[RMDB]
RNA sequence: GGGAACGACUCGAGUAGAGUCGAAAACAUAAUAACAGGCUGUGACGAGAGAUACCUCUCUGCGUAUAUUGGUUUUUCUGUUAAAUUAAGGGUUCAACCCAGAAAUGGAGACACUGUCUUGGCUCCUUUUCCUGCAGGUGUCUCUUUGACUACCUACUAUGUUAGAUCUCUUCGGAGAUCUAACAUAAAAAGAAACAACAACAACAAC
Reactivity to DMS in 0.01 (KOAc 150mM, MgCl2 10mM, bicine 150mM(pH8.5), 24C), signal-to-noise 1, nucleotides 027 to 156: c040a110u010a080a090u010a040a050c030a070g020g010c040u010g010u000g000a100c110g020a050g000a070g030a200u010a120c110c030u000c030u000c000u000g000c070g020u000a110u000a020u000u010g030g020u000u000u020u000u030c030u000g000u000u020a060a060a180u010u000a120a080g010g000g010u000u000c060a050a120c040c010c010a050g000a050a060a110u000g010g020a070g020a040c000a010c070u000g000u000c100u000u000g020g060c040u010c030c020u000u000u010u010c040c030u000g010c030a070g010g020u000g020u000c000u010c080u000u010u010g010a130c050u000a020c020c010u040a060c070